An RNA of 207 nucleotides, treated with 2A3 and DMS and read out base by base. It was measured as part of the RMDB library OK3TST. For DMS, 1,616 sequencing reads were counted. The 2A3 profile rests on 1,410 reads. For DMS the reverse transcriptase was MarathonRT. 2A3 adducts were read by reverse transcription with SuperScript II with manganese. Conditions: 150 mM KOAc, 10 mM MgCl2 and 150 mM bicine (pH 8.5), 24 C.
[RMDB]
RNA sequence: GGGAACGACUCGAGUAGAGUCGAAAAGGAUUUCUCGGAAUUGUUCGAUCCGGGAGACGAAGGGCCUGUAAGGUCAUCAGCUGCUGCUGAAAAGCAUCUACGAAGUCCUAUACUCGCUUCACUACUAAAUCGAAUUCGAAAAUUCGCAGAAGAGGUGCUACUUGCCCUAAUUCGUUAGGGCAAGUAGAAAAGAAACAACAACAACAAC
Reactivity to 2A3 in 0.01 (KOAc 150mM, MgCl2 10mM, bicine 150mM(pH8.5), 24C), signal-to-noise 3, nucleotides 027 to 156: g050g030a170u030u020u020c030u010c020g010g030a110a070u160u170g070u180u120c050g020a030u030c000c020g010g000g000a000g000a000c030g020a000a050g040g000g000c030c070u130g100u220a080a060g030g000u000c010a050u030c000a020g020c000u190g020c040u080g000c020u030g100a060a070a000a010g020c020a020u000c010u030a030c070g060a060a010g010u000c010c020u020a030u070a210c050u040c070g060c030u070u110c060a050c130u210a040c020u060a060a040a100u070c020g010a010a010u140u050c050g090a090a100a090a130u070u060c040g000c050a040g010a140a050g030a040g010g020u000g020
Reactivity to DMS in 0.01 (KOAc 150mM, MgCl2 10mM, bicine 150mM(pH8.5), 24C), signal-to-noise 1, nucleotides 027 to 156: g010g010a130u010u000u010c040u010c030g050g040a110a120u000u010g040u000u010c110g000a130u000c000c050g010g040g040a040g000a030c050g000a130a120g040g010g020c040c100u010g030u000a120a090g050g000u010c000a140u000c090a140g010c010u010g010c040u020g030c030u020g010a080a080a110a130g010c030a070u000c070u000a040c050g000a130a120g030u000c070c020u010a130u000a110c050u000c100g010c030u000u000c080a040c000u010a150c060u010a030a100a050u000c040g010a010a030u010u000c010g040a110a160a090a060u010u000c000g010c080a090g000a120a100g000a140g010g040u000g010